[RMDB]
RNA sequence: GGGAACGACUCGAGUAGAGUCGAAAAGAUAUGGAUGUGUACGAAUCUCCCCACCCUCUAAUCGGAAACGAUUACGAGGAGGACUAUACACAUCCUAAGUCAAAAGGCUAGACUUCGGUCUAGCCAACAUCGAUAGGGACUUCGGUCCCUAUCGAUGAAAAGAAACAACAACAACAAC
Reactivity to DMS in 0.01 (KOAc 150mM, MgCl2 10mM, bicine 150mM(pH8.5), 24C), signal-to-noise 1, nucleotides 027 to 126: g010a010u000a100u000g000g000a000u020g000u000g000u000a000c160g030a160a170u040c140u000c000c010c020c140a300c100c000c000u000c000u000a010a000u030c000g000g000a020a010a000c000g020a000u000u000a040c300g000a020g000g030a020g010g000a080c180u000a250u000a010c000a000c000a030u000c000c020u000a000a070g000u020c010a100a080a090a130g000g000c000u000a000g000a000c000u000u000c170g050g020u010c000u010a000g010c000c000a000a020
Notes: Chemical mapping of a 177-nucleotide RNA with DMS. Conditions: 150 mM KOAc, 10 mM MgCl2 and 150 mM bicine (pH 8.5), 24 C.